[RMDB]
RNA sequence: GGGAACGACUCGAGUAGAGUCGAAAAGAACCAGUGUUCGCACUGGUUCAAACCUGACAAGGCAGUCAGGAAAGUGUGCGAAAAGCACACUUAAACUCCCUAAAACCGUGAGCUUCGGCUCACGGAACUUGCAAACUAAGUUCGCUUAGUUUGCAAGAAAAGAAACAACAACAACAAC
Reactivity to 2A3 in 0.01 (KOAc 150mM, MgCl2 10mM, bicine 150mM(pH8.5), 24C), signal-to-noise 2, nucleotides 027 to 126: g000a000a010c000c000a000g010u010g020u030u040c110g040c080a000c000u000g000g000u000u010c000a010a010a020c000c000u000g000a000c010a030a050g300g150c060a030g050u000c010a000g010g000a000a050a000g020u010g000u010g000c020g050a180a100a070a110g010c000a000c000a000c000u000u000a010a000a000c020u020c000c000c000u110a240a240a060a170c000c010g000u000g010a000g000c000u030u180c300g070g000c010u010c000a000c000g000g020a000a020
Reactivity to DMS in 0.01 (KOAc 150mM, MgCl2 10mM, bicine 150mM(pH8.5), 24C), signal-to-noise 4, nucleotides 027 to 126: g000a010a010c000c000a020g030u000g030u000u010c230g020c010a000c000u000g010g010u000u000c000a030a080a070c000c000u000g000a010c000a130a140g020g020c230a090g000u000c000a000g010g020a100a030a010g010u000g030u010g010c000g000a120a040a110a160g000c000a010c000a000c000u000u000a020a130a130c200u000c000c000c010u000a070a090a080a170c000c000g010u000g000a010g000c000u020u020c170g010g000c000u000c000a000c000g000g000a000a020

Description
An RNA of 177 nucleotides, treated with 2A3 and DMS and read out base by base. For 2A3 the reverse transcriptase was SuperScript II with manganese. The 2A3 profile rests on 2,970 reads. For DMS the reverse transcriptase was MarathonRT. The reactions ran in a buffer of 150 mM KOAc, 10 mM MgCl2 and 150 mM bicine (pH 8.5), at 24 C. In probing experiments dimethyl sulfate is read out at A N1 and C N3, which are open when not base-paired.